[RMDB]
An RNA of 207 nucleotides, treated with DMS and 2A3 and read out base by base. Conditions: 150 mM KOAc, 10 mM MgCl2 and 150 mM bicine (pH 8.5), 24 C. DMS adducts were read by reverse transcription with MarathonRT. The 2A3 profile rests on 1,921 reads. For DMS, 4,423 sequencing reads were counted.
RNA sequence: GGGAACGACUCGAGUAGAGUCGAAAACGGUAUUGGUCAAGGCUAUACCGACAGCGCACCUUCAAAAGGGCGCUUAAUCCCCGGCCAAGCGCCGAAAUAUGAAUAGACACCGCUGGGGUGGUAGGGCAAAACAUGGCGAUCUUCGGAUCGCCAUGAACAUGUAAACGUACUUCGGUACGUUUACAUGAAAAGAAACAACAACAACAAC
Reactivity to DMS in 0.01 (KOAc 150mM, MgCl2 10mM, bicine 150mM(pH8.5), 24C), signal-to-noise 2, nucleotides 027 to 156: c030g010g030u000a030u000u020g110g000u000c070a120a140g030g030c010u000a110u000a050c010c000g020a130c150a040g020c050g050c010a100c000c010u000u000c240a070a100a160a090g040g010g030c000g000c000u000u010a040a060u000c010c010c000c050g030g000c000c050a090a070g000c020g010c020c030g000a030a080a080u000a170u010g010a090a150u000a090g010a060c060a040c040c030g000c030u000g040g000g020g030u000g030g040u010a040g000g000g030c090a050a050a070a190c030a010u010g000g030c000g020a020u000c000u000u000c300g030g010a010u000c010g010c010c000a000u000g000a030a140
Reactivity to 2A3 in 0.01 (KOAc 150mM, MgCl2 10mM, bicine 150mM(pH8.5), 24C), signal-to-noise 3, nucleotides 027 to 156: c020g000g010u000a000u070u260g050g010u090c080a080a110g120g000c000u010a010u000a000c000c010g010a040c060a010g000c000g020c080a300c070c020u020u080c120a080a100a010a000g010g010g000c000g020c000u010u000a010a000u000c000c000c010c010g000g000c000c020a170a040g030c070g020c070c000g080a030a040a010u240a060u100g050a060a040u060a080g040a040c030a020c030c020g060c110u090g030g020g000g000u040g000g020u040a070g000g000g030c060a020a020a020a050c010a010u000g000g000c010g010a000u020c000u030u040c100g080g020a000u010c020g000c000c010a000u000g000a000a000